[RMDB]
RNA sequence: GGGAACGACUCGAGUAGAGUCGAAAAUGGCAAAGACGUGAUGCGCAAGCUGGUGAUUCUGGCGCGUGAAGCAGGUUACAACAUCGAACCGGAUCAGGUACGUGUGGAAUCGCUGGUGCCUGCUCAACCAUCAUGGCCAGUUCGCUGGCCAUGAUGGAAAAGAAACAACAACAACAAC
Reactivity to 2A3 in 0.01 (KOAc 150mM, MgCl2 10mM, bicine 150mM(pH8.5), 24C), signal-to-noise 1, nucleotides 027 to 126: u050g090g000c070a120a050a040g110a090c100g030u080g120a040u170g020c000g020c050a020a050g020c010u040g010g000u030g010a040u030u080c020u070g200g260c010g000c010g000u030g040a020a010g050c060a000g000g060u000u030a130c040a210a020c020a180u250c150g020a030a000c010c000g000g070a190u080c000a030g030g060u180a010c020g030u030g030u060g000g050a020a030u000c000g000c040u000g020g020u010g030c010c000u010g000c010u040c020a020a080
Reactivity to DMS in 0.01 (KOAc 150mM, MgCl2 10mM, bicine 150mM(pH8.5), 24C), signal-to-noise 2, nucleotides 027 to 126: u000g030g060c000a060a120a080g030a080c070g040u010g030a050u010g020c100g020c070a100a150g020c010u010g000g030u000g020a040u000u000c010u000g050g040c030g000c030g020u000g010a050a050g020c040a060g010g020u000u000a020c100a070a100c200a070u000c140g030a070a020c010c000g010g000a090u000c120a060g020g030u010a020c020g020u010g000u020g000g010a110a050u000c030g010c010u000g020g000u000g010c050c050u010g000c050u000c040a070a180
The record gives the reactivity of an RNA of 177 nucleotides to 2A3 and DMS. For DMS, 1,418 sequencing reads were counted. The RNA was probed in 150 mM KOAc, 10 mM MgCl2 and 150 mM bicine (pH 8.5) at 24 C. It was measured as part of the RMDB library OK2TRN.